[RMDB]
RNA sequence: GGGAACGACUCGAGUAGAGUCGAAAAACCACCAGGUUGCCUAAGGAGGGGUGAACCGGCCCAGGUCGGAAACGGAGCAGGUCAAAACUCCCGUGCUGAUCAGUAGUGGGAUCGCGCCUGUGAAUAGCCACUGCACUCCAGCCUGAGCAACAUAGCAUCCACAAUAUUCGUUCGCGAAUAUUGUGGAAAAAGAAACAACAACAACAAC
Reactivity to 2A3 in 0.01 (KOAc 150mM, MgCl2 10mM, bicine 150mM(pH8.5), 24C), signal-to-noise 1, nucleotides 027 to 156: a020c050c010a030c080c020a070g020g030u000u000g000c030c010u060a060a050g010g010a020g020g020g010g020u000g000a120a110c000c000g000g020c010c030c040a100g060g050u030c010g000g080a030a090a070c120g010g000a030g000c030a000g020g020u120c000a000a000a010a150c090u070c010c020c000g010u010g050c020u070g070a250u130c060a030g060u070a060g110u130g060g000g000a030u060c070g000c030g040c120c000u010g000u000g020a050a120u180a110g040c070c000a020c050u210g060c010a000c020u000c010c020a050g060c000c000u010g000a030g020c010a000a000c020a000u060a030g030c000a020